[RMDB]
An RNA of 177 nucleotides, treated with 2A3 and DMS and read out base by base. Conditions: 150 mM KOAc, 10 mM MgCl2 and 150 mM bicine (pH 8.5), 24 C. For DMS, 6,999 sequencing reads were counted.

RNA sequence: GGGAACGACUCGAGUAGAGUCGAAAACAGGUACGGGAGCACGUCCUCCAGACGUACAAGAGCUACCUGGAGCGCCUCCUUGAGGCACUCAGAGAUGCGGUAGUGGGAAGAGACCGAUAUGCCAGAGCCUUCAACUAACUUUCGAGUUAGUUGAAGGAAAAGAAACAACAACAACAAC
Reactivity to 2A3 in 0.01 (KOAc 150mM, MgCl2 10mM, bicine 150mM(pH8.5), 24C), signal-to-noise 4, nucleotides 027 to 126: c020a020g030g030u040a020c020g000g000g070a020g050c080a010c170g050u060c020c020u020c030c010a060g040a050c020g030u040a030c030a070a050g040a020g070c030u020a020c010c030u040g060g010a010g000c020g010c000c000u000c030c100u080u280g020a010g010g020c010a010c030u030c010a040g040a020g020a150u150g060c030g030g020u040a030g030u070g040g040g040a080a040g060a020g020a040c010c030g030a050u040a040u200g050c040c020a030g020a020g120
Reactivity to DMS in 0.01 (KOAc 150mM, MgCl2 10mM, bicine 150mM(pH8.5), 24C), signal-to-noise 7, nucleotides 027 to 126: c060a090g000g000u000a050c050g000g020g010a180g020c080a050c060g010u010c040c060u020c150c150a130g000a300c030g020u000a050c040a090a120g000a200g010c090u000a030c010c010u000g010g000a010g010c040g000c040c000u000c010c260u010u020g010a010g020g010c000a010c020u000c000a090g010a130g000a080u010g010c110g000g020u010a040g030u000g000g000g010a130a100g000a110g000a090c050c020g000a100u010a050u010g010c050c030a110g010a190g000
Background:
For DMS the reverse transcriptase was MarathonRT.